[RMDB]
Structure probing data (2A3 and DMS) for a 207-nucleotide construct. The reactions ran in a buffer of 150 mM KOAc, 10 mM MgCl2 and 150 mM bicine (pH 8.5), at 24 C.
RNA sequence: GGGAACGACUCGAGUAGAGUCGAAAACCGAAGCCCCAUUGAGGGAUAAUACAGGCUCUCCCAUCCAACUCCUAUUCCAACACGUCCUCGUCGUACAGAGUGGUAAAAUGUGUCACCACAUAUCCAACAUAGUGUCGCAUCUUCGGAUGCGACACAACCAGUACUAAUUCUUCGGAAUUAGUACUGGAAAAGAAACAACAACAACAAC
Reactivity to 2A3 in 0.01 (KOAc 150mM, MgCl2 10mM, bicine 150mM(pH8.5), 24C), signal-to-noise 3, nucleotides 027 to 156: c020c000g020a130a020g080c010c000c020c010a070u060u120g040a160g040g000g020a020u110a090a050u110a060c080a050g040g000c000u010c010u020c020c020c010a020u040c020c020a040a040c020u020c010c000u050a100u080u040c000c010a050a000c030a010c060g040u030c000c010u030c060g040u020c020g010u050a050c050a050g090a060g080u030g020g010u050a040a060a040a110u140g030u030g040u060c030a020c060c010a010c020a030u090a050u060c040c040a040a080c030a140u180a090g000u010g000u000c000g000c010a020u000c000u040u040c140g040g010a000u000g000c000g000a000c000a000c000a000a000
Reactivity to DMS in 0.01 (KOAc 150mM, MgCl2 10mM, bicine 150mM(pH8.5), 24C), signal-to-noise 1, nucleotides 027 to 156: c000c020g000a120a200g020c030c020c020c000a300u010u010g020a060g040g000g010a020u000a070a130u000a040c050a150g000g010c040u010c050u000c010c070c000a240u010c030c070a120a110c050u000c010c040u000a090u000u000c020c010a060a080c050a110c060g000u010c000c010u000c040g030u030c040g020u000a100c060a070g010a110g030u000g000g020u010a030a030a080a090u010g000u000g000u000c130a040c030c030a030c010a150u020a090u030c030c040a120a170c070a090u010a090g050u000g030u000c000g050c010a000u000c020u010u010c280g010g000a070u000g010c000g000a010c000a020c000a010a040